[RMDB]
RNA sequence: GGGAACGACUCGAGUAGAGUCGAAAAGAUAUGGAUCAUUUAAGACAUGCUGGAACUUUCGGAAACGAAAGUAUGCAGCAACAGCUUACGGAUGAUCCUAAGUCAAACUAGCGCUUCGGCGCUAGAACGAAAGUACCUACUUCGGUAGGUACUUUCGAAAAGAAACAACAACAACAAC
Reactivity to DMS in 0.01 (KOAc 150mM, MgCl2 10mM, bicine 150mM(pH8.5), 24C), signal-to-noise 2, nucleotides 027 to 126: g020a020u000a150u000g000g000a010u000c000a010u000u000u000a020a050g010a030c030a290u000g010c010u000g000g000a050a040c000u000u000u000c000g000g010a030a060a090c000g000a020a040a000g010u010a030u010g040c010a010g020c010a100a060c230a060g010c000u000u010a070c300g020g020a000u020g010a020u000c000c010u010a030a110g010u000c020a090a100a190c000u000a000g010c010g030c010u000u020c220g030g020c010g000c010u000a000g000a040a240
Reactivity to 2A3 in 0.01 (KOAc 150mM, MgCl2 10mM, bicine 150mM(pH8.5), 24C), signal-to-noise 2, nucleotides 027 to 126: g000a000u040a010u110g000g000a020u000c030a040u040u050u070a040a020g020a040c180a290u300g020c010u030g000g130a060a030c040u000u010u020c000g070g000a010a030a020c010g010a000a010a000g010u060a080u300g080c000a000g000c030a010a040c040a030g000c000u060u040a050c110g180g000a020u000g000a010u000c000c000u010a080a000g000u030c020a070a080a160c040u010a000g000c000g000c020u040u060c300g150g000c010g000c000u000a000g000a050a010
The data come from the RNA Mapping Database (RMDB), library TTRDES. Chemical mapping of a 177-nucleotide RNA with DMS and 2A3. The RNA was probed in 150 mM KOAc, 10 mM MgCl2 and 150 mM bicine (pH 8.5) at 24 C.